An RNA of 177 nucleotides, treated with DMS and read out base by base. It was measured as part of the RMDB library M2PK90. The reactions ran in a buffer of 150 mM KOAc, 10 mM MgCl2 and 150 mM bicine (pH 8.5), at 24 C. For DMS, 888 sequencing reads were counted.
RNA sequence: GGGAACGACUCGAGUAGAGUCGAAAAUUAAUCCGGCUUUAAGUUGACGAGGGCAGGGUUUAUCGAGACAUCGGCGGGUGCCGUGCGGUCUUCCUGCGACCGUUAGAGGACUGGUAAACCAAUUUAAUAAUCCUUCAGAGUUCGCUCUGAAGGAUUAAAAAGAAACAACAACAACAAC
Reactivity to DMS in 0.01 (KOAc 150mM, MgCl2 10mM, bicine 150mM(pH8.5), 24C), signal-to-noise 1, nucleotides 027 to 126: u000u010a130a050u030c000c010g010g010c020u010u000u010a050a100g020u000u020g000a050c060g020a140g000g020g010c030a070g010g010g040u020u000u010a030u010c090g000a120g010a110c100a070u000c000g010g010c020g030g020g000u000g000c010c040g050u010g000c050g000g000u000c020u000u000c010c040u000g000c120g000a030c010c010g000u000u000a090g020a130g000g000a060c020u000g000g000u010a050a030a220c010c020a100a070u010u000u000a110a100